[RMDB]
RNA sequence: GGGAACGACUCGAGUAGAGUCGAAAAGGGACGUUCGCGUCCCACAAUACCUUUGUGGUUUCGCCUCUACAGAGCGAAACGUCUCCCAUUGGGAGACGUGUUCGCGACGAAGUAGAGGGAAGAAACCACUCUGGUUCACAGUCGGAUUCGUCCGAAAGCUAAAUUUUCAAUUCGUUGAAAAUUUAGCAAAAGAAACAACAACAACAAC
Reactivity to DMS in 0.01 (KOAc 150mM, MgCl2 10mM, bicine 150mM(pH8.5), 24C), signal-to-noise 2, nucleotides 027 to 156: g020g040g040a010c000g020u000u010c270g020c010g000u010c010c000c010a010c010a030a130u000a050c010c000u010u000u010g040u010g010g020u000u010u000c000g020c000c010u000c000u000a040c010a210g000a300g010c000g000a000a070a020c010g000u000c010u020c000c000c020a300u000u020g060g030g000a010g000a010c000g000u000g010u000u000c000g060c000g020a180c140g000a170a160g000u000a020g000a060g030g010g020a040a070g000a010a020a020c010c000a010c000u000c030u010g020g020u000u000c050a090c060a130g010u010c010g000g030a190u000u000c150g030u000c020c020g000a050a060a240
Reactivity to 2A3 in 0.01 (KOAc 150mM, MgCl2 10mM, bicine 150mM(pH8.5), 24C), signal-to-noise 5, nucleotides 027 to 156: g030g000g000a020c040g020u080u080c280g040c000g080u040c000c010c010a000c000a000a010u090a000c000c000u020u010u020g010u000g030g050u010u000u000c190g150c090c000u020c010u010a000c000a020g030a010g030c010g000a010a000a000c000g010u000c000u010c040c010c090a300u210u300g020g000g000a010g000a000c000g020u040g030u020u010c000g010c000g060a090c020g060a140a020g010u000a000g000a010g000g000g010a070a010g000a000a010a000c000c000a000c010u000c000u000g000g020u090u120c170a170c020a090g120u040c010g000g010a040u090u130c150g070u040c060c020g040a080a030a000